Description:
The data come from the RNA Mapping Database (RMDB), library OK2TST. An RNA of 177 nucleotides, treated with 2A3 and DMS and read out base by base. The DMS profile rests on 6,242 reads. DMS adducts were read by reverse transcription with MarathonRT. The reactions ran in a buffer of 150 mM KOAc, 10 mM MgCl2 and 150 mM bicine (pH 8.5), at 24 C.
RNA sequence: GGGAACGACUCGAGUAGAGUCGAAAAAGCAACCAGUCGGUGAAUAUCGCAGUGAUGCGCUGGCCGCUGAAGAGAUACUGACGCUGGCUAACUGGUGCCUGUUGAACUAUUCCGGGCUGAAAACGCCGAAGUUAGCAUAGUUCGCUAUGCUAACUUCAAAAGAAACAACAACAACAAC
Reactivity to 2A3 in 0.01 (KOAc 150mM, MgCl2 10mM, bicine 150mM(pH8.5), 24C), signal-to-noise 3, nucleotides 027 to 126: a000g070c040a060a030c020c010a000g020u030c030g080g020u110g070a090a040u100a040u130c040g000c020a000g050u050g140a160u060g020c030g000c050u050g040g000c010c010g000c010u010g000a040a020g030a010g030a050u130a280c020u030g040a020c020g000c100u170g000g000c020u040a080a060c050u090g030g020u010g020c020c000u070g040u100u270g040a070a030c030u010a050u070u000c010c000g050g000g000c010u040g060a070a030a050a070c080g030c020c070
Reactivity to DMS in 0.01 (KOAc 150mM, MgCl2 10mM, bicine 150mM(pH8.5), 24C), signal-to-noise 6, nucleotides 027 to 126: a110g010c060a100a120c080c010a030g010u010c060g030g020u020g010a120a090u000a080u000c020g010c010a020g010u020g010a150u010g010c020g020c100u000g000g010c030c000g010c020u000g000a200a040g010a130g000a150u000a100c040u000g020a300c170g020c050u010g050g010c010u000a080a060c030u000g020g010u000g010c050c040u010g000u010u000g000a050a090c180u010a160u000u000c030c020g010g010g000c020u010g000a060a050a070a120c200g010c070c060